[RMDB]
RNA sequence: GGGAACGACUCGAGUAGAGUCGAAAAGAAACCUAUAAUAGUAGGCAAUUUAAGUAACAUCUUAGUAGGUACAGAACUUAAUCUCAGACAAGAUGUAGAUUUUCAUACCUAUGUUUAGGUAUGAAAUGCAUUUUUUUUUGUAUACAUCGGGGGAUCGCGGUUGUAUAUCCUUCGGGAUAUACAACCGAAAAGAAACAACAACAACAAC
Reactivity to 2A3 in 0.01 (KOAc 150mM, MgCl2 10mM, bicine 150mM(pH8.5), 24C), signal-to-noise 2, nucleotides 027 to 156: g040a030a080a030c000c000u010a010u030a130a090u070a030g050u010a030g010g040c040a020a040u020u150u090a170a120g000u040a020a130c020a070u040c030u060u110a030g000u030a000g080g000u070a000c070a070g130a040a000c000u000u070a100a100u050c030u020c070a040g010a160c050a060a010g000a010u010g020u010a040g020a170u010u010u090u000c000a000u000a000c000c010u000a040u170g200u150u300u130a020g000g000u000a000u000g000a000a000a000u010g000c000a000u030u000u010u000u000u000u080u110u080g050u000a060u000a030c030a040u090c020g030g020g000g020g000a010u090c140g000
Reactivity to DMS in 0.01 (KOAc 150mM, MgCl2 10mM, bicine 150mM(pH8.5), 24C), signal-to-noise 1, nucleotides 027 to 156: g030a150a140a060c000c000u010a100u000a190a130u020a190g040u020a000g030g000c000a070a070u000u000u040a040a090g000u000a080a160c080a110u000c040u000u010a110g000u050a020g040g040u000a200c040a130g000a100a120c060u010u000a020a080u000c060u000c020a130g020a140c070a080a090g030a000u000g030u000a060g000a140u000u010u000u000c010a050u000a020c000c000u000a080u010g030u000u010u000a000g030g030u000a010u000g000a010a000a000u000g000c030a000u030u000u000u000u000u000u000u050u000g030u000a180u000a020c020a060u000c050g020g070g040g040g000a090u000c140g060